[RMDB]
RNA sequence: GGGAACGACUCGAGUAGAGUCGAAAAGCAUGAGUGAGCUUACACUCAUGUGAGUACUGUUAGUCCAAACAGUACUGAGUCUAGUGUAAGCUCACUGGACUGACUAGUGUUUGGACUAACACUGGUAGGACAGCAAUCUAUUCGUAGAUUGCUGUCCAAAAGAAACAACAACAACAAC
Reactivity to DMS in 0.01 (KOAc 150mM, MgCl2 10mM, bicine 150mM(pH8.5), 24C), signal-to-noise 3, nucleotides 027 to 126: g000c080a080u020g010a020g020u010g000a100g020c170u000u010a060c020a000c000u000c110a040u000g010u000g000a040g010u010a030c040u000g010u000u000a040g000u000c010c010a030a020a010c000a020g000u000a000c040u000g010a060g010u000c030u010a000g010u000g000u000a070a060g000c120u000c000a000c000u010g000g000a080c060u000g000a040c090u000a020g020u000g010u000u000u010g010g000a030c030u000a020a010c000a010c060u000g020g010u010a100
Reactivity to 2A3 in 0.01 (KOAc 150mM, MgCl2 10mM, bicine 150mM(pH8.5), 24C), signal-to-noise 1, nucleotides 027 to 126: g010c000a030u060g010a000g000u000g020a030g040c030u070u060a040c040a000c000u010c010a010u040g000u010g000a010g020u020a030c020u000g010u000u010a010g000u000c000c000a000a020a000c000a010g070u010a020c000u000g070a030g020u010c000u020a000g000u010g000u020a100a050g110c040u010c000a000c000u000g000g010a020c020u000g040a000c000u010a000g080u000g010u020u010u000g000g000a010c000u010a020a000c000a010c010u010g070g010u060a080
Record summary
Structure probing data (DMS and 2A3) for a 177-nucleotide construct. The 2A3 profile rests on 3,727 reads. Values cover nucleotides 27 to 126. For DMS the reverse transcriptase was MarathonRT. It was measured as part of the RMDB library OK2TRN. Conditions: 150 mM KOAc, 10 mM MgCl2 and 150 mM bicine (pH 8.5), 24 C. 2A3 adducts were read by reverse transcription with SuperScript II with manganese.